This 207-nucleotide RNA was probed chemically with 2A3 and DMS. Conditions: 150 mM KOAc, 10 mM MgCl2 and 150 mM bicine (pH 8.5), 24 C. For DMS, 2,914 sequencing reads were counted. High DMS reactivity at an A or C suggests that its Watson-Crick edge is free. The data come from the RNA Mapping Database (RMDB), library OK3TST.
[RMDB]
RNA sequence: GGGAACGACUCGAGUAGAGUCGAAAAGCUUUUAACGCCUGCGCAACCUUUGGAACUUAUAGCGGGCCGGAGUACCCAGCACGGUCCCGGAAGCAGAUUGCUGCCAUGGGGAUUCCUCAACAACCUCAAAGCUAUCGUCGAGGGCUGGUGCAUAUAAUCCAUUAAAUACUUUCGAGUAUUUAAUGGAAAAAGAAACAACAACAACAAC
Reactivity to 2A3 in 0.01 (KOAc 150mM, MgCl2 10mM, bicine 150mM(pH8.5), 24C), signal-to-noise 2, nucleotides 027 to 156: g010c030u010u000u060u100a150a070c070g000c000c000u000g050c040g000c050a070a110c010c000u100u110u200g110g020a070a090c040u170u200a120u130a160g020c000g000g010g000c000c010g040g000a040g000u060a100c010c010c000a000g030c010a010c010g020g050u080c020c010c000g030g020a010a010g030c050a050g020a140u050u040g000c020u040g040c020c040a120u050g000g020g000g000a100u180u260c000c030u110c040a060a160c010a090a070c040c000u030c000a090a060a000g000c000u020a020u080c020g030u060c020g000a150g000g010g050c040u110g090g000u000g030c030a000u190a020u250a230a090
Reactivity to DMS in 0.01 (KOAc 150mM, MgCl2 10mM, bicine 150mM(pH8.5), 24C), signal-to-noise 1, nucleotides 027 to 156: g020c020u000u060u030u000a060a090c110g010c000c010u020g000c000g030c080a140a100c030c030u000u000u010g030g000a060a090c120u000u000a090u000a130g030c000g010g030g080c000c050g000g030a080g020u000a110c020c010c000a140g000c030a130c060g040g000u010c000c020c000g020g030a070a060g020c010a080g020a120u000u000g020c020u010g000c040c020a130u010g040g020g020g000a210u000u020c040c030u010c050a060a070c040a080a070c010c000u000c040a040a110a090g020c000u000a090u000c070g020u000c060g000a150g020g020g000c080u010g000g020u000g020c010a110u000a040u000a090a230